[RMDB]
RNA sequence: GGGAACGACUCGAGUAGAGUCGAAAAGAUAUGGAGCUCGACAAGAAGAGCCUGGCGAUUCUCGGAAACGAGGGCCAGGAACUACUCUUACGAGCUCCUAAGUCAAAGCGAUGCUUCGGCAUCGCAACAAUUCGUUCCAGUUCGCUGGAACGAAUUGAAAAGAAACAACAACAACAAC
Reactivity to 2A3 in 0.01 (KOAc 150mM, MgCl2 10mM, bicine 150mM(pH8.5), 24C), signal-to-noise 2, nucleotides 027 to 126: g000a010u070a030u090g010g000a000g010c000u050c050g180a230c190a200a030g200a050a010g000a080g120c000c020u020g000g000c040g300a300u300u000c020u000c010g040g000a030a020a030c020g010a000g000g110g000c000c010a010g020g010a010a010c000u140a060c010u020c000u010u030a020c000g000a000g060c010u000c000c000u010a010a000g010u010c010a010a120a000g000c010g010a010u010g010c000u100u120c230g160g000c000a010u000c010g000c000a000a000
Reactivity to DMS in 0.01 (KOAc 150mM, MgCl2 10mM, bicine 150mM(pH8.5), 24C), signal-to-noise 2, nucleotides 027 to 126: g030a050u000a200u010g000g010a000g000c000u010c000g040a180c150a060a160g010a050a060g030a080g000c020c000u000g000g000c000g030a200u020u010c010u000c000g000g000a090a080a160c010g000a030g000g010g000c000c010a040g000g010a050a040c040u010a210c110u000c000u010u000a130c010g010a010g000c010u020c000c000u000a000a060g000u000c010a080a070a120g000c000g000a040u000g000c000u000u010c170g020g030c030a000u000c000g000c020a080a010